[RMDB]
RNA sequence: GGGAACGACUCGAGUAGAGUCGAAAAAGGUCGCGUGCCUGAGCGGAUGGAGGAUCUGCUUCUCCUUCCCGGCGUAGGGAGGAAGAGCGCGAACGUGAUCAGGGGUACCAUCUACGGAAGGCCUGCGCAGCACCCCUUUGUUCGCAAAGGGGUGCUGAAAAGAAACAACAACAACAAC
Reactivity to DMS in 0.01 (KOAc 150mM, MgCl2 10mM, bicine 150mM(pH8.5), 24C), signal-to-noise 3, nucleotides 027 to 126: a100g020g010u010c010g030c030g030u000g020c020c010u010g000a300g020c000g000g000a020u000g000g000a250g010g010a060u010c040u000g010c030u000u000c040u000c010c000u000u000c000c000c070g000g030c230g030u030a120g000g010g010a030g000g010a030a050g000a040g010c020g010c170g010a040a110c170g010u010g010a060u000c030a140g000g000g000g030u020a190c000c000a030u000c010u000a070c040g000g000a130a040g000g020c010c070u000g010c010g020
Reactivity to 2A3 in 0.01 (KOAc 150mM, MgCl2 10mM, bicine 150mM(pH8.5), 24C), signal-to-noise 2, nucleotides 027 to 126: a010g090g080u090c010g020c010g040u040g020c010c020u030g000a020g010c020g040g000a010u010g020g040a110g010g060a030u020c030u090g030c000u070u010c010u020c000c000u030u130c000c000c010g080g040c140g140u230a120g000g030g000a020g000g010a050a040g030a010g000c050g000c100g100a070a080c110g090u120g030a010u060c040a030g000g050g050g010u020a060c000c010a010u010c000u030a030c020g040g020a010a000g000g010c000c040u020g010c070g000